[RMDB]
RNA sequence: GGGAACGACUCGAGUAGAGUCGAAAACGCUUAAUCUGAAAUCAGAGCGGGGGACCCAAUAGAACGGCUUUUUGCCGUUGGGGUGAAUCCUUUUUAGGUAGGGCUAACUCUCAUAUGCCCGAAUCCGUCAGCUAACCUCGUAAGCGUUCGUGAGAGGCUUAUGUUAUCAGUUCGCUGAUAACAUAAGAAAAGAAACAACAACAACAAC
Reactivity to DMS in 0.01 (KOAc 150mM, MgCl2 10mM, bicine 150mM(pH8.5), 24C), signal-to-noise 3, nucleotides 027 to 156: c020g010c000u010u000a050a090u000c050u000g000a090a200a120u000c020a060g020a160g030c050g020g020g050g040g010a060c040c040c010a110a170u020a140g010a040a020c000g000g010c000u010u000u010u010u010g040c000c010g030u000u010g020g030g000g030u020g010a090a100u010c010c010u010u010u000u000u000a020g020g030u010a200g010g020g040c010u000a140a070c010u010c020u010c010a080u000a180u010g010c030c000c000g000a090a080u000c030c030g010u010c070a100g000c060u020a070a300c030c020u000c040g000u000a050a040g020c030g010u000u000c070g020u000g000a070g000a060g020g010
Reactivity to 2A3 in 0.01 (KOAc 150mM, MgCl2 10mM, bicine 150mM(pH8.5), 24C), signal-to-noise 5, nucleotides 027 to 156: c000g000c000u020u040a030a020u060c010u010g110a220a150a150u300c010a010g010a000g010c000g010g000g000g010g010a010c000c010c010a020a050u150a080g140a050a000c020g010g000c040u110u190u090u300u300g000c000c000g000u010u010g010g020g000g000u050g060a020a040u060c030c000u070u080u050u170u300a020g010g000u000a010g010g010g000c000u010a060a030c010u020c000u010c030a000u020a010u130g010c000c010c000g000a010a010u000c010c020g130u100c050a000g010c020u010a020a030c010c000u000c000g000u030a020a000g000c000g010u050u080c070g040u030g010a020g000a000g020g000